RNA sequence: GGGAACGACUCGAGUAGAGUCGAAAAGGGGUCAGAAUGAGCGCAGCGCCAUCGUUGGCGAAUAACGCAGCGACAGCUGCACCAAGCAGCACUAUCCAGGUGAACAGCAAGCGUCCGCGACCAUUGCAAGUUCUGGUAAGUUCGCUUACCAGAACUUAAAAGAAACAACAACAACAAC
Reactivity to 2A3 in 0.01 (KOAc 150mM, MgCl2 10mM, bicine 150mM(pH8.5), 24C), signal-to-noise 1, nucleotides 027 to 126: g050g030g020g000u030c040a010g050a120a140u100g010a080g020c020g010c020a020g000c010g000c050c000a070u120c090g130u100u100g120g000c030g000a030a020u190a130a060c070g000c020a030g000c000g050a070c060a050g040c000u010g000c000a010c020c070a030a040g020c000a000g000c010a020c040u040a080u010c030c000a000g040g000u030g020a070a030c020a040g040c000a070a050g050c020g070u030c030c040g030c010g010a050c000c010a060u040u190g000c040
Reactivity to DMS in 0.01 (KOAc 150mM, MgCl2 10mM, bicine 150mM(pH8.5), 24C), signal-to-noise 3, nucleotides 027 to 126: g000g000g000g020u000c050a110g010a100a030u020g010a150g010c030g020c060a140g010c030g000c020c050a120u010c120g000u000u010g020g010c020g000a150a060u000a060a100c120g040c020a050g000c020g010a070c280a100g010c020u000g000c010a060c100c050a090a130g020c080a020g040c000a110c100u010a030u010c030c070a080g020g020u000g000a050a090c080a090g000c050a090a070g020c070g000u000c020c030g010c020g000a080c080c040a070u020u010g000c150

Notes: An RNA of 177 nucleotides, treated with 2A3 and DMS and read out base by base. High DMS reactivity at an A or C suggests that its Watson-Crick edge is free. The RNA was probed in 150 mM KOAc, 10 mM MgCl2 and 150 mM bicine (pH 8.5) at 24 C. For 2A3 the reverse transcriptase was SuperScript II with manganese. The data come from the RNA Mapping Database (RMDB), library OK2TRN. For DMS, 1,892 sequencing reads were counted.